[RMDB]
RNA sequence: GGGAACGACUCGAGUAGAGUCGAAAAUAGGUACCCGAUUCGUCGGGUACCUAAAAAAACCUUUGUGCAUUAAGAGUCUUGGAUUUACCCAUUGGGUUGUCAGACUACUUACGGUGCACUCUGGUAAAAAAGAUUUGCUGUUUCGACAGCAAAUCAAGUUUUAGGGAUUCUUCGGAAUCCCUAAAACAAAAGAAACAACAACAACAAC
Reactivity to 2A3 in 0.01 (KOAc 150mM, MgCl2 10mM, bicine 150mM(pH8.5), 24C), signal-to-noise 1, nucleotides 027 to 156: u060a020g010g020u010a040c000c000c040g000a030u030u070c270g060u010c010g080g030g000u010a000c010c000u000a000a000a000a000a000a000a000c060c010u040u000u000g000u000g000c000a010u010u010a040a000g000a000g000u000c000u050u140g280g000a120u300u230u190a090c050c010c230a300u240u300g000g010g000u010u000g040u020c010a030g000a000c010u060a240c010u070u000a030c070g200g000u000g010c000a000c000u030c000u000g030g000u060a050a050a050a050a060a050g060a030u000u010u000g000c000u000g000u000u170u080c090g150a000c000a000g000c000a000a000a000u000c000a040a040